[RMDB]
RNA sequence: GGGAACGACUCGAGUAGAGUCGAAAAUGCGGGCCAAGCAGCGGGUUGAAGCGAUUUACGCAAAUCCGGCUACCGCAAUCGGGAAAAGAUGCUUGUGCCGUUUUCGUCAGCCACUCGCAGAGCAGAGCUGUUCUAGCUCCUUCGGGAGCUAGAACAGAAAAGAAACAACAACAACAAC
Reactivity to 2A3 in 0.01 (KOAc 150mM, MgCl2 10mM, bicine 150mM(pH8.5), 24C), signal-to-noise 2, nucleotides 027 to 126: u100g020c030g000g060g070c010c000a060a050g030c010a040g030c010g030g000g080u060u080g070a180a040g000c030g020a040u100u140u300a090c030g010c000a030a050a000u000c000c000g090g000c010u030a020c000c020g000c050a000a200u170c020g040g040g010a000a000a050a090g120a040u070g000c030u070u020g070u180g040c000c080g000u030u000u000u010c000g020u010c010a010g030c060c000a080c020u000c010g030c060a010g000a020g070c040a000g000a040g020
Reactivity to DMS in 0.01 (KOAc 150mM, MgCl2 10mM, bicine 150mM(pH8.5), 24C), signal-to-noise 2, nucleotides 027 to 126: u010g040c060g000g010g010c000c010a000a010g000c000a000g000c040g000g000g000u000u000g060a300a170g190c000g000a260u060u020u000a150c000g060c150a170a120a030u000c000c010g000g010c040u020a130c010c000g020c200a090a070u030c090g000g000g000a100a070a090a080g010a120u000g000c030u020u000g060u000g000c000c000g000u000u000u030u000c010g000u020c000a060g000c070c030a020c000u000c060g020c100a110g020a040g020c060a120g010a130g020